[RMDB]
RNA sequence: GGGAACGACUCGAGUAGAGUCGAAAAAUGCCGCAUUCAGAGACGGUGACUCUAGUGGGCCACUGUCCAUCUAGCGUUGACAUCUACAUACUAUAUAGUAAUACCAAUACUCAAGACUACGAAACGGGGAUGGACGACGAUUCGUCGUCGUCCAUCCAAAAGAAACAACAACAACAAC
Reactivity to 2A3 in 0.01 (KOAc 150mM, MgCl2 10mM, bicine 150mM(pH8.5), 24C), signal-to-noise 1, nucleotides 027 to 126: a000u150g000c000c000g000c000a010u110u160c140a000g030a000g070a150c000g080g000u000g000a000c000u000c000u100a000g000u300g030g000g020c100c000a030c010u000g000u000c000c000a000u020c000u000a000g000c000g000u000u130g050a030c000a000u000c000u000a000c040a020u070a150c050u000a000u100a040u120a280g100u000a030a030u090a050c010c010a000a120u120a040c020u000c050a020a110g020a070c060u000a110c210g070a020a190a050c040g040g000